RNA sequence: GGGAACGACUCGAGUAGAGUCGAAAAAGAGGAGGCUGGGUUUUGCGAUCUUUAAGCAGAUGGCAGGUUCACCCCGUACGGUGCGGAAGUUCGCGCUUCCGUGAAACGCGAAAAUCCGACGGUGGCUAAGACCAAUAACAGUUCGCUGUUAUUGGAAUCUUUCUCUGAUGUUCGCAUCAGAGAAAGAAAAAGAAACAACAACAACAAC
Reactivity to DMS in 0.01 (KOAc 150mM, MgCl2 10mM, bicine 150mM(pH8.5), 24C), signal-to-noise 1, nucleotides 027 to 156: a100g000a120g000g000a020g020g040c020u000g010g020g010u000u000u000u020g000c020g010a080u000c050u000u000u000a030a220g010c150a040g020a140u000g020g070c010a070g030g000u000u000c020a100c000c000c000c070g010u000a050c010g010g000u000g000c030g000g000a020a080g010u010u000c130g020c260g010c000u000u000c020c150g010u010g040a030a050a000c030g030c030g010a070a030a060a100u000c000c030g020a050c020g000g000u000g010g000c050u010a070a160g010a210c000c000a010a050u000a020a020c010a020g010u000u020c300g030c000u000g060u000u000a010u010u000g000g010a030a050
Reactivity to 2A3 in 0.01 (KOAc 150mM, MgCl2 10mM, bicine 150mM(pH8.5), 24C), signal-to-noise 2, nucleotides 027 to 156: a000g030a020g020g020a040g010g010c100u070g040g020g020u050u030u070u110g000c030g020a020u050c040u020u180u200a100a050g030c040a020g020a090u030g040g010c020a020g000g050u090u100c040a050c000c000c000c000g010u050a060c000g010g050u060g020c010g000g010a010a010g010u040u220c060g010c030g010c100u020u010c030c030g010u020g020a100a090a010c070g020c020g020a040a010a010a060u020c000c010g000a000c010g020g090u180g000g010c000u040a050a020g040a060c000c000a000a000u000a000a000c000a010g010u020u030c160g030c090u000g000u000u000a000u000u000g000g000a020a000